[RMDB]
RNA sequence: GGGAACGACUCGAGUAGAGUCGAAAACGCAAUCAAGAUUAGCACCUCAGGACCUUGUCGAAGGCUCAAUCACAAAGGUUACUUCCUACUGGCGAAGUGCCCGCCCGGCGACAGUGUUACCGUCAGCCAUUUAGUCUCACUUCGGUGAGACUAAAUGAAAAGAAACAACAACAACAAC
Reactivity to 2A3 in 0.01 (KOAc 150mM, MgCl2 10mM, bicine 150mM(pH8.5), 24C), signal-to-noise 6, nucleotides 027 to 126: c040g010c040a020a090u100c040a100a090g040a230u080u110a020g010c020a040c040c010u020c020a020g080g000a060c010c030u060u090g050u100c050g070a050a020g050g010c020u040c090a080a080u070c020a040c080a140a090a010g030g020u070u130a060c010u040u010c020c010u070a180c070u120g070g000c100g050a070a010g070u030g060c010c000c020g030c000c010c000g060g020c010g020a010c010a020g010u030g050u130u100a040c000c040g050u040c020a010g040c020
Reactivity to DMS in 0.01 (KOAc 150mM, MgCl2 10mM, bicine 150mM(pH8.5), 24C), signal-to-noise 6, nucleotides 027 to 126: c110g010c100a060a070u000c110a090a130g010a090u010u000a070g010c060a080c040c030u000c060a080g020g000a050c050c040u000u010g020u000c080g010a140a060g000g000c060u010c090a090a070u010c070a060c130a060a090a100g010g010u000u000a080c080u000u000c010c020u000a120c120u010g020g010c090g010a070a060g010u000g000c010c010c040g020c040c040c040g010g020c020g000a050c040a040g020u000g010u010u000a050c050c060g020u000c040a070g010c080